[RMDB]
RNA sequence: GGGAACGACUCGAGUAGAGUCGAAAACAUAAGAACUCAGAGCUAAUGAGCCACAUACCUACCCAAGGUGAAAGCUCCUUCUCUCGCAAUGUGUAACUCAUGAUUCUCAUGACCCCUGGUUGGAGAGCGCGCUAACACGCCUUCGGGCGUGUUAGAACGUGUAAGCUUCUUUCGAGAAGCUUACACGAAAAGAAACAACAACAACAAC
Reactivity to DMS in 0.01 (KOAc 150mM, MgCl2 10mM, bicine 150mM(pH8.5), 24C), signal-to-noise 1, nucleotides 027 to 156: c060a230u010a030a070g000a040a100c030u000c010a070g010a070g000c020u000a110a100u000g020a040g090c060c030a080c040a150u000a080c040c000u000a110c020c020c050a140a110g030g060u000g050a110a180a080g020c020u000c010c030u010u000c010u000c010u000c050g000c090a160a060u000g000u000g010u000a020a080c000u020c010a040u030g010a150u020u010c040u020c010a080u010g000a160c020c010c010c060u010g000g040u000u000g000g010a110g000a070g000c000g060c060g010c010u010a000a010c010a020c000g020c000c000u010u000c300g050g020g030c000g000u010g010u010u000a010g010a050a060
Reactivity to 2A3 in 0.01 (KOAc 150mM, MgCl2 10mM, bicine 150mM(pH8.5), 24C), signal-to-noise 2, nucleotides 027 to 156: c020a020u120a080a060g040a090a000c010u000c120a030g000a000g000c050u090a160a040u040g000a000g060c020c020a040c000a060u160a020c010c020u050a030c000c000c050a040a020g060g000u000g040a080a030a060g030c000u030c000c030u140u040c080u020c020u080c040g020c110a060a110u080g050u020g020u080a110a080c020u010c010a030u040g020a130u140u040c060u020c070a070u050g050a090c010c000c000c040u080g070g020u050u050g020g000a040g000a010g070c060g010c000g000c040u000a010a000c000a000c000g010c000c000u040u080c130g100g010g000c000g000u000g000u000u000a000g000a010a000

The record gives the reactivity of an RNA of 207 nucleotides to DMS and 2A3. Conditions: 150 mM KOAc, 10 mM MgCl2 and 150 mM bicine (pH 8.5), 24 C. Values cover nucleotides 27 to 156. For DMS the reverse transcriptase was MarathonRT. Source: RMDB library M2RFPK, as collected in RNAgym.